RNA sequence: GGGAACGACUCGAGUAGAGUCGAAAAAAGUAGAUGAAGAAGAACGCAAAAGAAGAGAGCAGCAGAAACAUGCCAAAGAACAGGUAAUUGGGCUAUGUUAAUUCUUGGGGGGUGAGAAAUGGCAACAUAAAUAUUGAUUUAUUCCUGUCUAUUUCAAAGGGAUCAAAAUAUUCGUAUUUUGAUCCCUAAAAGAAACAACAACAACAAC
Reactivity to DMS in 0.01 (KOAc 150mM, MgCl2 10mM, bicine 150mM(pH8.5), 24C), signal-to-noise 1, nucleotides 027 to 156: a060a080g010u010a080g000a040u030g010a120a060g000a130a050g020a090a070c070g040c100a050a070a090a060g000a060a030g020a090g000a070g040c060a050g020c080a060g000a090a110a110c030a070u030g000c000c090a090a110a110g000a110a080c120a010g020g020u010a060a140u010u000g020g040g120c010u020a040u000g020u000u010a060a080u010u000c030u000u000g000g020g040g040g050g030u000g020a090g010a020a020a030u020g020g040c020a060a060c090a060u000a010a020a070u000a110u000u000g020a110u010u000u000a050u030u020c030c000u010g000u000c040u000a040u000u000u000c040a050a130
Reactivity to 2A3 in 0.01 (KOAc 150mM, MgCl2 10mM, bicine 150mM(pH8.5), 24C), signal-to-noise 1, nucleotides 027 to 156: a000a000g040u080a020g020a070u120g020a010a050g000a030a000g010a100a000c070g000c110a040a180a000a000g040a030a000g010a000g000a000g000c030a000g070c000a000g100a030a080a000c040a010u020g050c010c040a040a070a000g120a110a030c020a040g160g000u080a040a050u090u190g030g000g000c000u010a000u020g000u000u050a070a060u160u000c010u010u050g040g000g020g000g010g020u010g000a050g000a020a000a020u050g000g000c020a060a000c010a050u080a020a040a010u160a120u100u110g030a050u000u070u000a060u000u060c000c000u000g060u020c020u140a100u210u300u240c090a030a010